The record gives the reactivity of an RNA of 177 nucleotides to DMS and 2A3. The 2A3 profile rests on 4,611 reads. For DMS the reverse transcriptase was MarathonRT. 2A3 adducts were read by reverse transcription with SuperScript II with manganese. Conditions: 150 mM KOAc, 10 mM MgCl2 and 150 mM bicine (pH 8.5), 24 C.

RNA sequence: GGGAACGACUCGAGUAGAGUCGAAAACGUCAUGUAUUUACGGCCAAUGAUCAUUACUGCAUAAGCUUAGGGUAUCGUAAGAACAUUUCAUUUAGUGUUUCUACUUUGUUUAUUGGAGACUAUGACGCUCUUUCAUACGCUUCGGCGUAUGAAAGAGAAAAGAAACAACAACAACAAC
Reactivity to DMS in 0.01 (KOAc 150mM, MgCl2 10mM, bicine 150mM(pH8.5), 24C), signal-to-noise 2, nucleotides 027 to 126: c000g010u030c020a020u000g000u050a030u000u000u040a070c030g000g000c020c120a050a090u000g010a060u040c120a050u010u020a100c120u000g000c000a040u000a010a110g000c080u000u000a040g010g000g010u000a090u040c060g000u040a020a060g010a000a000c000a000u020u050u000c260a110u000u010u000a010g010u000g000u010u000u000c000u000a070c080u020u010u010g040u000u010u010a050u030u000g020g030a060g020a050c040u000a060u040g000a040c090g040
Reactivity to 2A3 in 0.01 (KOAc 150mM, MgCl2 10mM, bicine 150mM(pH8.5), 24C), signal-to-noise 6, nucleotides 027 to 126: c020g020u010c030a010u060g050u030a090u070u090u040a040c020g050g000c020c000a150a090u130g060a060u070c050a050u100u200a080c020u030g010c010a030u030a140a050g050c020u020u010a000g020g000g010u050a050u130c020g000u010a060a000g010a050a000c010a030u040u140u120c090a150u140u080u210a090g020u040g030u030u080u000c000u020a040c020u030u060u100g080u060u080u040a080u050u050g040g050a040g000a020c020u000a080u130g000a000c030g010